[RMDB]
RNA sequence: GGGAACGACUCGAGUAGAGUCGAAAAGCACUCUCCGAAUUCGCCAUGCGCGGCGUAGACCUCACCCGAAUCGAAUUCCGCCCCAUCGAAGAAGGCCUAGGAACCUACCGAUUCCACGUGGACAUCAAUGGGCAUAUCGACGACCUCAACGUCGCCAACCCCUCGCACCGUUCGCGGUGCGAGGGGUAAAAGAAACAACAACAACAAC
Reactivity to 2A3 in 0.01 (KOAc 150mM, MgCl2 10mM, bicine 150mM(pH8.5), 24C), signal-to-noise 2, nucleotides 027 to 156: g060c010a020c060u020c000u060c020c010g020a130a090u110u100c020g000c030c000a070u190g050c100g000c020g040g000c000g000u000a070g050a040c010c010u020c020a010c000c040c020g060a020a040u080c010g010a010a070u130u020c050c030g060c030c000c000c010a050u000c030g080a090a120g010a060a020g040g020c000c000u030a020g010g050a050a050c000c010u040a060c020c060g050a080u050u040c000c010a080c100g090u170g000g020a020c000a060u100c070a010a020u080g020g000g020c080a060u030a040u150c090g050a060c010g100a060c040c040u130c050a090a070c070g000u010c010g000c000c000a020